[RMDB]
The record gives the reactivity of an RNA of 177 nucleotides to DMS and 2A3. For 2A3, 4,920 sequencing reads were counted. 2A3 adducts were read by reverse transcription with SuperScript II with manganese. Source: RMDB library OK2TRN, as collected in RNAgym.
RNA sequence: GGGAACGACUCGAGUAGAGUCGAAAAGUAGAGACAAGUUUUCACCAUGUUGGCCAAAUGGUCUCAAUCUCCUGACCUCAUGAUCCACCUGCUUUGGCCUCCCAUGGUGCUGGGAUUACAGGUGUGAUCAUAAUCCACUGUUCGCAGUGGAUUAUGAAAAAGAAACAACAACAACAAC
Reactivity to DMS in 0.01 (KOAc 150mM, MgCl2 10mM, bicine 150mM(pH8.5), 24C), signal-to-noise 7, nucleotides 027 to 126: g000u000a110g010a050g010a050c120a070a110g010u010u010u000u000c100a090c050c010a030u000g010u000u000g010g010c010c020a020a070a060u000g000g010u000c020u000c050a090a140u010c060u000c020c020u000g000a100c070c040u010c120a090u010g010a030u000c020c010a030c010c010u000g010c110u000u000u000g000g010c030c040u000c050c060c010a030u000g000g010u010g020c110u000g000g010g010a080u010u000a090c020a000g000g010u000g000u000g010a030
Reactivity to 2A3 in 0.01 (KOAc 150mM, MgCl2 10mM, bicine 150mM(pH8.5), 24C), signal-to-noise 3, nucleotides 027 to 126: g050u070a000g000a010g020a050c050a120a070g030u020u070u100u250c050a050c000c000a000u050g020u040u090g070g000c000c010a020a070a080u070g020g020u000c000u000c000a060a110u010c020u020c020c030u050g070a120c010c020u130c050a110u130g040a010u000c010c000a010c010c000u020g040c040u080u020u040g020g000c000c020u030c000c000c000a030u130g130g010u130g140c070u020g010g020g040a040u060u150a060c010a010g000g000u030g030u060g020a010